Source: RMDB library OK3TST, as collected in RNAgym.
Structure probing data (2A3 and DMS) for a 207-nucleotide construct.
Values cover nucleotides 27 to 156.
DMS adducts were read by reverse transcription with MarathonRT.
The 2A3 profile rests on 2,025 reads.
The reactions ran in a buffer of 150 mM KOAc, 10 mM MgCl2 and 150 mM bicine (pH 8.5), at 24 C.
RNA sequence: GGGAACGACUCGAGUAGAGUCGAAAAAGGGUAGAGGCUUUUGUUGCAAAGUUAUAUUUGCAGUUGAGCAGUUAUUCCGCACUAAGUGGCAUUGUAACAAAUCCAGAUGCUUGGAAAGAGGAUAUGUUUUACCCAGCUACUACAAUCAAUUCACUAAAAAAAUACACUCAUUCGUGAGUGUAUUUUUAAAAGAAACAACAACAACAAC
Reactivity to 2A3 in 0.01 (KOAc 150mM, MgCl2 10mM, bicine 150mM(pH8.5), 24C), signal-to-noise 4, nucleotides 027 to 156: a010g050g010g010u080a070g010a080g100g020c020u080u110u120u160g030u060u020g000c020a020a030a020g040u150u110a140u070a090u220u040u010g020c010a040g020u070u070g020a010g000c000a010g010u020u020a050u160u080c010c000g050c020a050c070u120a190a030g030u030g020g000c010a020u080u090g040u030a040a030c020a060a100a020u020c010c000a010g040a200u120g050c020u050u060g050g040a070a070a000g040a020g000g020a030u040a040u110g030u010u050u020u070a040c000c010c030a020g000c010u040a030c010u030a040c060a050a060u100c020a050a130u150u100c040a030c070u270a010a150
Reactivity to DMS in 0.01 (KOAc 150mM, MgCl2 10mM, bicine 150mM(pH8.5), 24C), signal-to-noise 2, nucleotides 027 to 156: a080g030g010g020u010a050g020a200g030g030c010u000u000u010u000g030u000u000g010c000a060a060a130g010u010u010a100u000a110u000u000u000g010c020a050g040u000u010g010a060g050c030a160g020u000u000a150u010u000c020c000g040c040a130c070u000a070a110g040u010g010g010c060a080u000u020g000u000a120a150c070a080a070a070u000c070c030a170g030a140u020g000c060u000u000g030g010a030a050a090g000a130g000g010a050u000a050u000g020u010u000u000u000a090c030c030c000a130g040c020u000a090c040u000a060c050a040a100u030c040a030a160u000u010c010a100c120u030a020a000